[RMDB]
RNA sequence: GGGAACGACUCGAGUAGAGUCGAAAAGUUAUGGAUGAUUCUAUGGAUGAGCCGACUGUCACGCCAGUAGAUGUCAGUCCAGCAAAGCGCCCGAGUGGCGCUGCUCGGAGGUCGGACAAGGAAGAGGGUGUUUAACACCAUUCGUGGUGUUAAACACAAAAGAAACAACAACAACAAC
Reactivity to 2A3 in 0.01 (KOAc 150mM, MgCl2 10mM, bicine 150mM(pH8.5), 24C), signal-to-noise 2, nucleotides 027 to 126: g040u090u100a070u210g000g060a080u060g020a060u120u000c020u040a060u070g040g040a040u050g060a060g030c030c030g080a070c030u060g030u090c020a000c060g000c040c010a070g040u040a040g030a040u090g070u070c010a010g070u020c030c010a000g020c010a000a120a000g000c010g000c010c000c000g090a060g020u230g000g000c000g000c000u000g000c000u010c000g080g060a040g000g040u060c040g010g000a030c020a040a020g110g010a090a050g050a080g080g160
Reactivity to DMS in 0.01 (KOAc 150mM, MgCl2 10mM, bicine 150mM(pH8.5), 24C), signal-to-noise 4, nucleotides 027 to 126: g010u010u010a070u010g030g000a120u010g010a070u000u000c020u000a050u010g010g010a090u000g010a100g020c040c090g000a060c060u000g000u000c060a060c100g000c090c040a050g020u000a040g010a080u000g000u000c070a080g000u000c010c020a050g000c050a050a090a070g000c000g020c010c000c020g010a140g010u010g010g010c010g010c000u000g010c020u010c090g020g010a100g010g020u000c050g000g010a090c080a050a110g000g010a080a060g020a070g010g000
An RNA of 177 nucleotides, treated with 2A3 and DMS and read out base by base. The data come from the RNA Mapping Database (RMDB), library OK2TST. The RNA was probed in 150 mM KOAc, 10 mM MgCl2 and 150 mM bicine (pH 8.5) at 24 C. The 2A3 profile rests on 2,669 reads. Reactivities are given for positions 27 through 126.